[RMDB]
RNA sequence: GGGAACGACUCGAGUAGAGUCGAAAAGUCUAGCGAAUGGAUCCCACCCGGGACACACGCAAGUCGCGAAUUAGGCCGACCGGCCAAGGUCAAUCGCAGAACUCAACUGCAUGAGUAAGCUAGACGAGGUAUAUACUAUCUUCGGAUAGUAUAUACCAAAAGAAACAACAACAACAAC
Reactivity to DMS in 0.01 (KOAc 150mM, MgCl2 10mM, bicine 150mM(pH8.5), 24C), signal-to-noise 9, nucleotides 027 to 126: g010u000c000u000a000g000c000g010a140a110u010g010g010a150u000c000c000c010a210c270c080c170g010g000g000a080c110a170c060a060c080g000c080a080a080g020u000c080g010c020g010a050a090u000u000a120g010g010c010c020g010a120c140c110g010g010c030c040a060a100g000g010u000c040a080a070u000c040g010c010a090g010a070a060c080u010c140a060a130c090u000g010c060a100u000g000a110g000u000a090a190g000c000u000a010g000a010c010g010a070
Reactivity to 2A3 in 0.01 (KOAc 150mM, MgCl2 10mM, bicine 150mM(pH8.5), 24C), signal-to-noise 9, nucleotides 027 to 126: g000u000c000u000a000g000c010g080a110a100u150g100g070a130u020c010c000c010a040c020c030c010g010g020g010a010c020a010c010a010c090g020c050a060a030g090u070c040g010c010g030a090a140u100u050a160g030g000c020c010g060a130c070c080g080g020c010c020a020a010g040g000u050c020a020a040u050c050g000c030a030g040a120a060c040u060c140a050a150c070u070g000c030a060u060g010a020g080u040a020a020g010c000u010a000g000a010c010g000a020
This 177-nucleotide RNA was probed chemically with DMS and 2A3. It was measured as part of the RMDB library OK2TRN. The DMS profile rests on 13,574 reads. High 2A3 reactivity points to a flexible backbone, as in loops and unpaired stretches. The RNA was probed in 150 mM KOAc, 10 mM MgCl2 and 150 mM bicine (pH 8.5) at 24 C.